RNA sequence: GGGAACGACUCGAGUAGAGUCGAAAAUGCAGGCUGCUUGCCAGCACGUGUGAGCAGCGGAUGCAUGCACACACAGACGCUCAUCGCAAGAGCGGGUGCAAUCACAGUGGCCUUUAGUGGCGUGCUAGCACGAUUACCCUUUCGAGGGUAAUCGUGCAAAAGAAACAACAACAACAAC
Reactivity to DMS in 0.01 (KOAc 150mM, MgCl2 10mM, bicine 150mM(pH8.5), 24C), signal-to-noise 2, nucleotides 027 to 126: u000g010c030a020g000g020c020u020g000c000u010u010g000c000c070a160g000c160a020c210g000u010g070u000g000a000g010c010a000g010c000g050g010a160u000g000c040a070u000g000c070a060c030a170c110a020c100a090g000a130c030g000c000u000c020a020u010c300g010c270a170a070g020a000g010c010g000g000g000u000g000c020a150a050u000c220a030c160a070g010u000g000g040c010c110u000u000u010a150g000u010g010g020c010g040u000g020c010u000a100
Reactivity to 2A3 in 0.01 (KOAc 150mM, MgCl2 10mM, bicine 150mM(pH8.5), 24C), signal-to-noise 2, nucleotides 027 to 126: u030g000c000a010g070g000c000u000g010c000u050u030g000c000c020a050g120c190a030c090g170u150g000u000g040a000g000c010a000g000c060g060g030a040u030g000c000a030u040g000c010a020c000a000c010a010c010a040g080a090c070g000c010u010c020a110u200c090g110c190a180a110g010a000g000c000g000g010g000u000g000c010a040a020u140c050a050c040a170g030u060g070g030c060c000u170u160u160a240g160u170g110g000c040g030u010g030c010u000a050